[RMDB]
Conditions: 150 mM KOAc, 10 mM MgCl2 and 150 mM bicine (pH 8.5), 24 C. Structure probing data (2A3 and DMS) for a 177-nucleotide construct. For DMS, 679 sequencing reads were counted.

RNA sequence: GGGAACGACUCGAGUAGAGUCGAAAAACAUCAAUGCCAGUGUUGCCCAUAAUGCGGUAACCAGUUGCAUCAGUGACCGGUCAGUCUCCCUGACAUAAUCUGCGGCAUCAGCAGCACGGUAACGGCAGUGGGAAGCACUUUUCGAAGUGCUUCCCACAAAAGAAACAACAACAACAAC
Reactivity to 2A3 in 0.01 (KOAc 150mM, MgCl2 10mM, bicine 150mM(pH8.5), 24C), signal-to-noise 2, nucleotides 027 to 126: a000c050a060u080c040a000a110u020g030c010c010a040g010u020g000u270u010g010c000c040c050a090u300a190a140u180g090c110g000g000u010a030a030c020c010a000g060u220u120g000c000a020u040c020a020g000u000g100a050c000c030g040g020u050c010a010g020u000c040u020c050c020c000u010g010a000c020a040u150a070a060u050c010u010g030c030g040g000c010a050u000c100a070g000c000a000g000c000a010c040g000g000u050a050a030c020g050g000c040a010
Reactivity to DMS in 0.01 (KOAc 150mM, MgCl2 10mM, bicine 150mM(pH8.5), 24C), signal-to-noise 1, nucleotides 027 to 126: a030c110a100u000c070a120a070u020g000c000c030a150g020u020g050u000u000g000c020c050c090a100u010a060a090u000g020c120g030g000u000a000a010c040c000a170g000u000u000g040c000a050u000c140a140g020u000g000a200c040c070g030g070u010c040a030g020u000c140u000c060c050c000u030g020a050c040a050u010a070a060u000c050u020g020c070g010g000c070a030u000c090a090g040c080a060g000c100a130c120g000g020u000a110a090c040g090g000c130a080